[RMDB]
The record gives the reactivity of an RNA of 177 nucleotides to DMS and 2A3. 2A3 adducts were read by reverse transcription with SuperScript II with manganese.
RNA sequence: GGGAACGACUCGAGUAGAGUCGAAAAGUUCUAGUCUGGACAAACGCGACUUCAUCCAAGGCGUCUCUGGAGGGACGUGGGUUGACGUGGUGCUCGACCGUAAGGGAUGUGUCACCAUAACAGCCCCGGGUUCUAACUGAUUCGUCAGUUAGAACCCAAAAGAAACAACAACAACAAC
Reactivity to DMS in 0.01 (KOAc 150mM, MgCl2 10mM, bicine 150mM(pH8.5), 24C), signal-to-noise 2, nucleotides 027 to 126: g000u000u020c030u000a140g020u020c040u000g020g000a060c080a100a110a080c170g020c040g010a070c030u020u000c070a030u000c060c050a090a080g000g010c040g020u000c000u000c030u000g030g030a150g000g010g010a040c110g010u010g000g000g020u000u010g010a070c200g020u010g030g020u000g010c020u000c010g020a300c000c000g020u000a060a120g030g000g000a230u000g010u000g000u010c000a010c000c000a010u020a230a260c030a010g020c010c000c000c200
Reactivity to 2A3 in 0.01 (KOAc 150mM, MgCl2 10mM, bicine 150mM(pH8.5), 24C), signal-to-noise 2, nucleotides 027 to 126: g000u000u000c020u090a090g180u000c050u040g070g000a010c050a050a060a010c060g030c010g100a130c030u050u050c090a130u030c040c040a070a010g100g000c010g030u010c020u000c010u050g110g020a070g050g030g010a020c040g030u170g010g040g010u000u000g050a060c060g010u000g020g000u010g000c010u000c030g070a050c000c000g040u060a060a180g100g010g020a100u170g080u020g100u130c000a000c010c000a010u000a100a080c010a010g000c020c000c010c000
Reactivities are given for positions 27 through 126. Conditions: 150 mM KOAc, 10 mM MgCl2 and 150 mM bicine (pH 8.5), 24 C. For DMS, 1,607 sequencing reads were counted. It was measured as part of the RMDB library OK2TRN.